[RMDB]
RNA sequence: GGGAACGACUCGAGUAGAGUCGAAAACGAAUAGAAUUCGUUCUAUUCGAAUGACUGCUAAAAGCAGAGUUGACUGCGCCGAGCAGAAAGGGCAAAGGAAAAAGUAGCCCAGAUUCGUCUGGGCUAACAUUAUAGGGACAUUCGUGUCCCUAUAAUGAAAAGAAACAACAACAACAAC
Reactivity to 2A3 in 0.01 (KOAc 150mM, MgCl2 10mM, bicine 150mM(pH8.5), 24C), signal-to-noise 4, nucleotides 027 to 126: c000g000a010a000u000a000g000a010a020u050u040c170g030u080u000c020u010a000u000u000c000g000a020a020u090g050a030c020u010g020c010u050a080a070a090a040g000c010a000g030a040g080u120u100g120a150c010u010g000c030g010c010c040g030a010g000c030a040g170a120a050a020g040g010g010c040a080a050a060g070g060a100a130a030a020a040g090u030a000g000c000c000c000a000g000a010u030u060c120g030u010c080u010g000g000g010c000u000a000a000
Reactivity to DMS in 0.01 (KOAc 150mM, MgCl2 10mM, bicine 150mM(pH8.5), 24C), signal-to-noise 9, nucleotides 027 to 126: c010g010a010a000u000a010g000a010a050u000u010c180g020u000u000c000u000a000u000u000c000g010a100a080u000g010a180c010u000g010c010u000a040a050a070a160g000c010a010g000a180g010u010u010g010a120c010u000g000c030g010c070c060g000a060g010c010a030g010a050a070a080g010g000g010c090a060a070a110g010g010a050a040a060a090a170g010u000a010g010c000c000c000a000g000a020u000u010c180g010u000c000u000g000g000g010c000u000a000a050